[RMDB]
RNA sequence: GGGAACGACUCGAGUAGAGUCGAAAAUCGGCGGGUACCGCCUGGGCACGGCUGGCCGACGCCGAUUUGGCCUGGCUCGACGGUGAUCAGCUCGGCCGACGCGUGCAUCGGGUUGCCUGCGACUACCAGCACUCCUUAGGUUCGCCUAAGGAGUGCUAAAAGAAACAACAACAACAAC
Reactivity to DMS in 0.01 (KOAc 150mM, MgCl2 10mM, bicine 150mM(pH8.5), 24C), signal-to-noise 1, nucleotides 027 to 126: u010c110g000g050c000g040g000g030u000a000c300c250g010c020c020u000g030g040g020c000a000c020g000g000c000u050g020g010c050c000g000a000c190g030c020c000g000a000u010u020u040g020g060c060c040u000g030g000c020u000c110g000a050c180g000g040u020g040a060u000c040a050g000c010u000c080g000g000c010c000g000a010c020g010c040g110u000g000c010a040u020c000g000g000g000u000u000g020c000c000u000g000c000g000a040c040u080a100c170c110
Reactivity to 2A3 in 0.01 (KOAc 150mM, MgCl2 10mM, bicine 150mM(pH8.5), 24C), signal-to-noise 4, nucleotides 027 to 126: u070c020g200g030c000g020g000g010u040a100c050c090g020c020c010u040g040g000g000c000a000c020g060g000c020u040g010g010c000c030g020a020c130g000c000c010g000a000u010u000u070g020g010c020c010u090g080g090c050u070c210g140a100c100g030g030u050g010a040u040c010a000g020c000u010c010g000g000c010c000g030a050c080g000c000g020u010g010c030a180u140c010g000g010g000u060u080g010c000c000u000g010c010g030a020c000u090a030c000c000